[RMDB]
RNA sequence: GGGAACGACUCGAGUAGAGUCGAAAAUAUAAAUAAGAAGUCCGCGCAGCUCCCGACGCACGGUGUGCAAUGCUACGUCGAGCGAGCGACGUAGCUGCUGCGCCGACGGCUAGCAAAAGCUAGCCAAGGCACGCAUCGGAUUCGUCCGAUGCGUGCCAAAAGAAACAACAACAACAAC
Reactivity to 2A3 in 0.01 (KOAc 150mM, MgCl2 10mM, bicine 150mM(pH8.5), 24C), signal-to-noise 1, nucleotides 027 to 126: u240a030u100a020a110a020u230a050a040g250a180a010g020u000c000c000g000c000g000c000a000g000c010u010c000c000c000g050a020c020g030c010a000c160g290g290u290g000u040g020c000a020a090u090g000c000u000a000c000g000u000c000g000a200g120c040g130a100g130c040g020a000c000g000u000a000g040c000u000g000c000u000g040c050g030c000c000g040a050c050g000g000c000u000a000g000c010a110a000a010a300g030c000u000a000g000c000c000a030a040